[RMDB]
Structure probing data (2A3 and DMS) for a 177-nucleotide construct.
The DMS profile rests on 2,389 reads.

RNA sequence: GGGAACGACUCGAGUAGAGUCGAAAAGCUGUACGCUUCGGCGUACAGCAAAUAAAAUCAGCGGUUAAAAAGCAGGCGUUAUAACCGCUGAACGCCUGCUAAAAAGUACUACCUUCGGGUAGUACAAUCAUAUAAAUACCUUCGGGUAUUUAUAUGAAAAAGAAACAACAACAACAAC
Reactivity to 2A3 in 0.01 (KOAc 150mM, MgCl2 10mM, bicine 150mM(pH8.5), 24C), signal-to-noise 1, nucleotides 027 to 126: g010c020u000g000u000a010c010g000c000u030u090c280g150g000c010g000u000a000c000a010g000c020a000a000a000u010a000a010a000a060u040c010a000g010c030g050g070u060u170a120a070a040a030a060g030c010a010g020g000c010g000u000u050a130u050a200a080c000c000g000c030u010g020a000a000c000g010c000c010u010g030c030u040a040a080a000a000a040g000u000a000c000u010a010c010c000u000u100c230g120g000g000u000a000g010u000a000c000a000a000
Reactivity to DMS in 0.01 (KOAc 150mM, MgCl2 10mM, bicine 150mM(pH8.5), 24C), signal-to-noise 2, nucleotides 027 to 126: g010c000u000g020u010a000c000g010c000u000u010c180g030g020c000g040u000a000c000a010g030c000a000a040a030u000a060a060a080a150u000c020a050g000c010g020g020u000u010a030a100a120a140a060g010c020a030g010g000c000g030u000u000a070u000a070a090c000c010g010c030u000g010a020a000c040g010c000c000u010g010c060u000a040a030a080a100a080g000u000a000c000u000a000c000c000u000u010c220g010g000g010u000a000g000u000a000c000a030a090

Source: RMDB library M2PK50, as collected in RNAgym.